[RMDB]
RNA sequence: GGGAACGACUCGAGUAGAGUCGAAAAUCAUGGUGGUUCGCCACCAUGAACUGUCUAGUCGCUAGAAAACGAUCAAAACUAGCGACUAGACUAACGUUCGAACUGGGGGACAGUUCGCUGUCCCCAAUACUUUGUCCUAGUUCGCUAGGACAAAGUAAAAAGAAACAACAACAACAAC
Reactivity to DMS in 0.01 (KOAc 150mM, MgCl2 10mM, bicine 150mM(pH8.5), 24C), signal-to-noise 3, nucleotides 027 to 126: u010c000a000u000g000g020u000g000g000u000u020c180g020c000c000a010c000c000a000u010g010a010a080c120u000g000u010c010u000a000g010u000c000g010c010u000a000g000a070a050a140a150c190g000a120u010c150a080a070a110a120c000u000a000g010c010g010a000c000u000a000g000a020c000u000a040a030c170g000u000u000c040g000a080a120c220u010g030g000g030g000g000a030c000a000g000u000u010c210g030c010u000g000u000c010c000c000c060a040a010
Reactivity to 2A3 in 0.01 (KOAc 150mM, MgCl2 10mM, bicine 150mM(pH8.5), 24C), signal-to-noise 2, nucleotides 027 to 126: u030c000a000u020g010g010u000g010g060u030u030c180g040c060c000a010c010c000a000u000g000a010a010c010u010g000u000c000u030a010g000u010c020g020c000u000a000g070a060a270a060a070c130g090a190u220c140a040a120a030a070c000u000a000g020c000g000a000c000u000a000g000a000c000u000a000a010c020g030u020u060c030g060a130a070c130u170g130g000g030g030g000a000c000a000g000u040u030c170g020c080u000g000u010c000c000c000c000a010a000
Chemical mapping of a 177-nucleotide RNA with DMS and 2A3. As a SHAPE reagent, 2A3 marks flexible, mostly unpaired nucleotides at the ribose 2'-OH. High DMS reactivity at an A or C suggests that its Watson-Crick edge is free. The data come from the RNA Mapping Database (RMDB), library M2PK50. For 2A3, 2,359 sequencing reads were counted.